[RMDB]
RNA sequence: GGGAACGACUCGAGUAGAGUCGAAAAGCGAAGCGCACUGGCGGCGCAGAGCUGUGCGUGGCCGGGUGGCUGACCUGGCUGUGGGACGCGAUCAAGCGGUGGUUCGGCUCCACGCCACUCACUGAGCAGUCACUUAGAUCUUCGGAUCUAAGUGACUAAAAGAAACAACAACAACAAC
Reactivity to DMS in 0.01 (KOAc 150mM, MgCl2 10mM, bicine 150mM(pH8.5), 24C), signal-to-noise 3, nucleotides 027 to 126: g050c000g020a300a290g000c000g010c010a070c030u030g000g020c100g000g000c010g060c000a010g000a300g000c010u000g030u020g010c070g050u010g010g030c010c040g000g000g040u030g000g000c040u000g000a120c070c020u010g000g040c020u010g040u040g000g010g000a070c030g010c090g020a080u030c120a130a140g000c040g000g000u000g020g020u000u000c040g020g000c040u000c050c010a080c200g000c030c000a030c040u000c030a020c040u000g030a100g010c120
Reactivity to 2A3 in 0.01 (KOAc 150mM, MgCl2 10mM, bicine 150mM(pH8.5), 24C), signal-to-noise 4, nucleotides 027 to 126: g010c000g030a060a000g010c030g010c030a070c110u240g080g090c280g040g000c020g030c020a000g020a000g000c070u050g040u030g020c010g020u020g030g000c020c000g000g010g070u160g040g030c040u050g010a040c000c000u030g080g020c040u040g070u100g030g060g030a040c060g040c030g060a120u160c090a080a050g030c040g070g020u050g030g090u120u140c020g010g000c020u020c010c000a060c030g010c000c000a020c030u050c000a080c050u080g050a060g020c030
This 177-nucleotide RNA was probed chemically with DMS and 2A3. High 2A3 reactivity points to a flexible backbone, as in loops and unpaired stretches. For DMS the reverse transcriptase was MarathonRT. For 2A3, 3,410 sequencing reads were counted. For DMS, 4,035 sequencing reads were counted. Conditions: 150 mM KOAc, 10 mM MgCl2 and 150 mM bicine (pH 8.5), 24 C. 2A3 adducts were read by reverse transcription with SuperScript II with manganese. Reactivities are given for positions 27 through 126.